RNA sequence: GGGAACGACUCGAGUAGAGUCGAAAAUACGAUAUCUUCACACCAGAAUGAAAUACGGACGAAGGUAUCAUCUGUAUUUCCGGUAGCUAGAUGCAACCACGUGAAGAUAGAUGAUACUUUGAGAUCAGUCGGUCGAGCAUUUCGAUGCUCGAUCGACAAAAGAAACAACAACAACAAC
Reactivity to DMS in 0.01 (KOAc 150mM, MgCl2 10mM, bicine 150mM(pH8.5), 24C), signal-to-noise 1, nucleotides 027 to 126: u000a060c140g000a190u060a040u010c050u000u000c000a000c040a270c090c180a000g010a210a160u070g000a000a020a030u000a030c040g000g010a020c040g030a020a060g000g000u050a000u000c000a060u000c000u000g000u000a020u000u000u000c040c100g000g080u040a000g040c000u050a080g050a110u050g050c000a060a060c000c010a090c160g000u000g000a070a000g000a000u000a000g000a160u000g000a050u000a020c000u000u000u000g000a020g000a130u020c120a140
Reactivity to 2A3 in 0.01 (KOAc 150mM, MgCl2 10mM, bicine 150mM(pH8.5), 24C), signal-to-noise 1, nucleotides 027 to 126: u150a020c080g010a010u000a040u000c000u000u040c020a010c010a000c020c150a000g110a080a040u050g000a110a000a000u070a000c000g010g010a000c000g030a110a000g000g000u000a000u010c000a000u000c000u000g010u000a070u020u020u010c020c010g000g000u000a000g000c050u000a000g010a070u060g020c000a010a000c000c000a120c040g020u040g010a000a000g050a000u000a000g000a100u080g000a000u000a000c000u000u000u080g020a000g010a040u030c000a000
An RNA of 177 nucleotides, treated with DMS and 2A3 and read out base by base. It was measured as part of the RMDB library OK1LIB. The RNA was probed in 150 mM KOAc, 10 mM MgCl2 and 150 mM bicine (pH 8.5) at 24 C. Reactivities are given for positions 27 through 126. For 2A3, 2,191 sequencing reads were counted. For DMS the reverse transcriptase was MarathonRT.